An RNA of 177 nucleotides, treated with DMS and 2A3 and read out base by base.
RNA sequence: GGGAACGACUCGAGUAGAGUCGAAAAGGAGGAGGAGGCUCUGUACCCCUGCACCUCCUGCCUGCUGGGUGAGCUGCUGGGAGCUGCACUGGGGCUCAGAGCAGUCCUGUGCGCCCCUCAGGCUGUGGAUAGCAAACAAGUUCGCUUGUUUGCUAUCAAAAGAAACAACAACAACAAC
Reactivity to DMS in 0.01 (KOAc 150mM, MgCl2 10mM, bicine 150mM(pH8.5), 24C), signal-to-noise 9, nucleotides 027 to 126: g010g010a050g010g010a080g010g010a060g000g010c060u000c090u000g010u010a190c060c040c000c090u000g010c160a090c080c000u000c010c000u000g000c110c030u000g000c090u000g000g010g010u010g010a070g010c010u000g010c080u000g000g000g000a060g010c080u010g020c000a050c100u010g020g000g020g010c050u000c010a090g010a090g010c060a010g010u000c010c000u000g010u000g010c040g000c010c000c010c020u000c060a070g000g000c040u000g010u000g010
Reactivity to 2A3 in 0.01 (KOAc 150mM, MgCl2 10mM, bicine 150mM(pH8.5), 24C), signal-to-noise 5, nucleotides 027 to 126: g050g020a010g010g030a020g020g020a020g020g020c020u000c030u120g100u150a150c010c000c010c010u050g030c050a070c000c000u000c000c000u000g030c000c010u020g010c040u050g010g110g050u140g120a060g000c020u070g000c020u050g060g020g010a100g050c020u020g000c030a030c080u060g010g020g120g010c070u070c030a070g020a010g040c010a000g020u010c000c000u030g050u050g010c020g010c000c000c010c010u030c010a020g050g000c020u060g000u080g210
The 2A3 profile rests on 10,735 reads.